Source: RMDB library OK2TRN, as collected in RNAgym.
Chemical mapping of a 177-nucleotide RNA with DMS and 2A3.
For 2A3, 1,731 sequencing reads were counted.
The reactions ran in a buffer of 150 mM KOAc, 10 mM MgCl2 and 150 mM bicine (pH 8.5), at 24 C.

[RMDB]
RNA sequence: GGGAACGACUCGAGUAGAGUCGAAAACGAAAAUGUACCGGGGCUAAACGUAUCACCGAAGCUGUGGGUGGACACCAUCAGGUGUCCGCGGUAGGAGAGCGUUCUAAGUGCAUCGAAGUCAGACCGCCACUCGACAAUGUUUCGACAUUGUCGAGUGAAAAGAAACAACAACAACAAC
Reactivity to DMS in 0.01 (KOAc 150mM, MgCl2 10mM, bicine 150mM(pH8.5), 24C), signal-to-noise 2, nucleotides 027 to 126: c040g000a100a050a060a080u000g030u000a040c000c050g020g020g010g000c100u010a020a090a100c090g010u000a100u000c050a060c030c030g030a120a080g000c040u010g000u000g020g020g000u010g020g000a020c010a000c000c000a160u010c300a090g020g030u010g010u010c000c000g050c000g020g000u000a060g020g000a090g000a060g010c030g000u000u000c050u000a050a120g020u000g000c020a100u010c070g010a110a140g010u010c090a080g000a220c000c040g030c150
Reactivity to 2A3 in 0.01 (KOAc 150mM, MgCl2 10mM, bicine 150mM(pH8.5), 24C), signal-to-noise 1, nucleotides 027 to 126: c010g040a000a010a030a080u100g000u050a020c020c010g000g000g070g000c070u070a070a060a050c040g050u080a160u250c020a010c020c010g060a090a040g060c080u120g010u100g090g080g120u080g000g020a010c010a000c010c000a040u300c080a110g000g000u000g010u000c010c000g000c020g000g010u060a070g000g020a010g000a010g000c000g000u020u010c030u070a130a080g010u020g000c000a030u030c020g020a040a000g010u000c040a010g040a030c000c010g000c010